[RMDB]
RNA sequence: GGGAACGACUCGAGUAGAGUCGAAAAUAAGAGAAAAACUUAUGAUUCUGUCCAAUGUUAUACAAAGGAAGUAUAAAGAUGGAUCAGAAUCUGUCUCAUCAGGGCUCAGGGCAAUAAUGAGCAUGUCCUAUCUGUGGAAGUUCGCUUCCACAGAUAGAAAAGAAACAACAACAACAAC
Reactivity to DMS in 0.01 (KOAc 150mM, MgCl2 10mM, bicine 150mM(pH8.5), 24C), signal-to-noise 4, nucleotides 027 to 126: u000a040a020g020a080g010a120a090a080a150a110c040u000u000a020u000g010a010u000u000c010u000g010u010c000c000a040a110u010g000u000u000a000u000a000c010a060a110a170g020g010a100a110g010u000a000u000a010a020a060g000a210u000g000g000a010u010c020a020g000a020a000u000c010u010g000u000c010u010c010a110u000c150a080g020g000g010c020u000c060a020g010g000g010c140a040a050u000a120a110u000g000a020g020c010a060u000g000u010c100
Reactivity to 2A3 in 0.01 (KOAc 150mM, MgCl2 10mM, bicine 150mM(pH8.5), 24C), signal-to-noise 3, nucleotides 027 to 126: u040a000a010g020a000g040a000a040a040a000a110c030u080u060a030u130g000a000u020u040c000u000g000u000c000c000a020a020u160g020u110u010a010u010a040c020a020a200a060g200g070a180a210g120u000a000u010a020a020a030g170a090u060g000g000a060u250c040a000g010a020a000u000c010u000g050u010c010u000c020a150u090c040a040g230g010g000c010u020c030a010g050g120g010c100a100a150u100a200a090u100g000a010g000c020a000u040g020u000c010